[RMDB]
RNA sequence: GGGAACGACUCGAGUAGAGUCGAAAACGAGACGGCUUCGGCCGUCUCGAAAGAAACCGAAAGGAGUGGCGAGCUGCAGCCACAAUAAAACAAAUGCAGCAAAAAGGAAGCCGUUCGCGGCUUCCAACACCAUAAUUGAGUUCGCUCAAUUAUGGUGAAAAGAAACAACAACAACAAC
Reactivity to DMS in 0.01 (KOAc 150mM, MgCl2 10mM, bicine 150mM(pH8.5), 24C), signal-to-noise 1, nucleotides 027 to 126: c020g000a030g010a020c000g020g010c000u000u040c170g040g030c030c000g060u000c000u000c000g010a030a060a110g020a160a160a160c030c000g030a030a080a110g000g030a220g010u000g000g000c000g000a130g020c000u000g010c000a050g000c000c000a000c010a070a030u010a020a000a060a030c180a010a000a020u010g010c000a000g020c010a030a010a060a060a040g010g020a040a000g020c000c000g020u000u010c230g040c010g020g000c000u000u010c000c000a040a070
Reactivity to 2A3 in 0.01 (KOAc 150mM, MgCl2 10mM, bicine 150mM(pH8.5), 24C), signal-to-noise 2, nucleotides 027 to 126: c000g000a000g010a010c030g010g070c050u080u120c300g090g020c070c010g010u000c000u000c000g000a000a010a000g010a030a030a000c040c030g090a060a060a000g150g040a120g040u000g000g010c020g000a040g000c020u010g000c010a000g000c000c000a000c000a010a110u040a020a000a010a010c210a010a010a020u050g000c000a010g000c010a010a020a010a010a010g000g000a000a000g000c010c000g040u100u130c200g010c090g090g000c020u000u000c000c000a000a000
Conditions: 150 mM KOAc, 10 mM MgCl2 and 150 mM bicine (pH 8.5), 24 C. An RNA of 177 nucleotides, treated with DMS and 2A3 and read out base by base. For DMS, 1,224 sequencing reads were counted. For DMS the reverse transcriptase was MarathonRT. It was measured as part of the RMDB library M2PK50.